[RMDB]
Source information: The data come from the RNA Mapping Database (RMDB), library TTRDES. Chemical mapping of a 177-nucleotide RNA with DMS and 2A3. 2A3 adducts were read by reverse transcription with SuperScript II with manganese. For 2A3, 4,413 sequencing reads were counted. The reactions ran in a buffer of 150 mM KOAc, 10 mM MgCl2 and 150 mM bicine (pH 8.5), at 24 C.
RNA sequence: GGGAACGACUCGAGUAGAGUCGAAAAGAUAUGGAGCAGGUACUGCUCGAGGAUCUAGGAUCGGAAACGAUCCUAGGGAGAGCUGUACUGCUCCUAAGUCAAACGAGCCCCGUUCGCGGGGCUCGAACUAGUACCUACUGUUCGCAGUAGGUACUAGAAAAGAAACAACAACAACAAC
Reactivity to DMS in 0.01 (KOAc 150mM, MgCl2 10mM, bicine 150mM(pH8.5), 24C), signal-to-noise 2, nucleotides 027 to 126: g020a030u000a300u000g000g010a010g000c000a040g010g000u000a060c080u010g010c010u000c000g000a080g020g020a040u000c000u000a000g000g010a000u000c000g000g010a100a120a210c000g000a000u000c000c000u000a000g000g000g010a030g000a040g030c010u010g010u000a050c010u000g000c010u000c000c000u000a010a080g010u010c040a120a120a300c020g000a010g000c000c010c000c000g050u000u010c250g030c020g040g000g020g000c000u010c000g000a000a120
Reactivity to 2A3 in 0.01 (KOAc 150mM, MgCl2 10mM, bicine 150mM(pH8.5), 24C), signal-to-noise 1, nucleotides 027 to 126: g020a010u060a040u150g010g000a010g000c020a040g210g220u180a070c030u090g030c010u020c000g050a300g010g000a010u020c000u000a000g000g000a000u000c000g030g000a060a000a060c020g000a000u000c020c020u000a000g020g000g010a020g000a000g000c000u060g030u090a080c010u000g000c000u000c000c000u010a010a000g010u010c020a050a070a100c040g000a000g030c000c000c060c020g010u050u060c300g010c060g090g020g000g000c000u020c000g010a000a000